Structure probing data (DMS and 2A3) for a 177-nucleotide construct. The RNA was probed in 150 mM KOAc, 10 mM MgCl2 and 150 mM bicine (pH 8.5) at 24 C. 2A3 adducts were read by reverse transcription with SuperScript II with manganese.
RNA sequence: GGGAACGACUCGAGUAGAGUCGAAAAGAUAUGGAACGAGCAACAGCCUGUGGCUCGGAAACGAGCCCAGGACAUGCUCUUCCUAAGUCAAAAGUAUCACUUCUGCGUUCGCGCAGAAGUGAUACAAGCUUAUGACAUCGUUCGCGAUGUCAUAAGCAAAAGAAACAACAACAACAAC
Reactivity to DMS in 0.01 (KOAc 150mM, MgCl2 10mM, bicine 150mM(pH8.5), 24C), signal-to-noise 2, nucleotides 027 to 126: g010a040u000a300u010g000g020a010a010c220g010a000g000c010a020a040c260a180g010c000c010u000g000u010g010g000c000u010c000g020g000a070a050a110c010g010a000g010c000c000c000a000g000g000a030c090a070u000g000c010u010c010u000u020c000c000u000a050a140g000u010c040a060a150a100a170g020u000a010u010c000a000c000u000u000c000u020g000c000g020u000u010c210g000c000g000c000a010g000a000a000g000u000g000a000u000a000c020a050a080
Reactivity to 2A3 in 0.01 (KOAc 150mM, MgCl2 10mM, bicine 150mM(pH8.5), 24C), signal-to-noise 2, nucleotides 027 to 126: g020a020u070a050u130g020g020a010a080c190g000a040g010c000a000a180c070a160g130c000c000u160g120u300g110g000c000u000c000g030g000a030a040a000c000g000a000g000c000c000c040a000g000g030a000c000a020u010g000c000u000c000u000u000c000c000u020a100a030g050u000c040a030a050a060a090g000u000a010u030c000a010c010u000u000c000u010g000c010g040u030u100c300g000c010g000c180a000g000a010a000g000u000g000a000u000a000c000a000a000